[RMDB]
RNA sequence: GGGAACGACUCGAGUAGAGUCGAAAAAGUGACGGGCUAAGUAUACUCAGAUAGUCAACGAUCAUUUAUCACUAUGGCAUCUUCACAACCUCUUAAGAUGAAAUUUAGCGAGUAUCUAGACCAGCGCACUUUUCUCUAGCUUCGGCUAGAGAAAAGUAAAAGAAACAACAACAACAAC
Reactivity to DMS in 0.01 (KOAc 150mM, MgCl2 10mM, bicine 150mM(pH8.5), 24C), signal-to-noise 2, nucleotides 027 to 126: a070g060u000g000a110c040g010g000g020c000u000a030a100g000u010a010u000a030c030u010c040a150g010a090u000a020g000u000c130a130a160c190g040a060u010c100a110u020u000u010a080u000c060a180c020u000a030u000g040g010c020a010u000c030u010u000c170a090c130a090a130c070c080u010c130u000u000a030a030g010a050u000g000a050a110a140u000u000u010a050g030c140g010a000g050u000a010u000c000u000a040g010a050c020c000a120g030c130g010c070
Reactivity to 2A3 in 0.01 (KOAc 150mM, MgCl2 10mM, bicine 150mM(pH8.5), 24C), signal-to-noise 1, nucleotides 027 to 126: a000g050u010g020a070c040g010g020g000c010u020a000a150g090u080a070u000a040c010u030c040a030g080a210u100a040g040u030c070a000a040c060g070a070u110c030a010u100u290u110a130u070c000a010c020u040a020u040g020g010c000a010u000c000u140u060c040a050c060a270a300c000c040u120c040u080u120a020a050g040a070u100g000a000a130a200u140u130u000a110g010c030g010a000g020u010a020u040c010u010a000g010a070c000c000a010g000c070g060c090